[RMDB]
RNA sequence: GGGAACGACUCGAGUAGAGUCGAAAAGGUAGUCUUCGGACUACCAAAAAAACCUUUGUGCUGGACCGUCCGAAGAACUGACCGCUAGGCCCAUUGGGCCUAUGUCAGGGAGGACUAGUACAGCACUCUGGUAAAAAUCCACCCUUCGGGGUGGAAACGUACAUGCUAGAUUCGUCUAGCAUGUACGAAAAGAAACAACAACAACAAC
Reactivity to DMS in 0.01 (KOAc 150mM, MgCl2 10mM, bicine 150mM(pH8.5), 24C), signal-to-noise 1, nucleotides 027 to 156: g000g040u010a020g010u010c010u010u010c300g040g020a020c000u000a010c020c010a020a010a020a130a020a060a020c000c000u000u010u000g020u000g000c010u010g000g020a020c020c110g010u010c000c010g000a150a190g010a170a220c020u010g000a020c000c000g020c030u000a010g010g010c000c000c000a300u030u000g030g030g000c000c000u000a010u000g010u010c000a010g010g000g000a190g000g000a010c010u000a010g000u000a060c000a030g010c000a000c000u000c000u000g040g040u000a000a030a060a050a150u010c000c000a000c000c010c000u000u000c300g020g020g000g000u000g000g000a010a000a030
Reactivity to 2A3 in 0.01 (KOAc 150mM, MgCl2 10mM, bicine 150mM(pH8.5), 24C), signal-to-noise 1, nucleotides 027 to 156: g010g000u020a000g000u000c000u020u090c290g030g000a010c010u010a000c000c000a050a040a000a000a000a040a060c000c030u030u000u000g000u000g020c000u020g000g030a000c000c000g000u000c010c010g080a220a000g010a060a020c000u000g000a000c000c000g000c010u000a000g000g020c000c000c020a150u190u300g030g000g020c000c010u010a030u170g000u000c000a010g000g000g000a040g010g000a010c000u010a000g000u000a000c000a000g010c000a000c000u000c000u010g000g010u060a070a090a010a000a050u010c010c000a010c020c000c010u040u050c200g050g000g010g000u000g000g000a040a000a010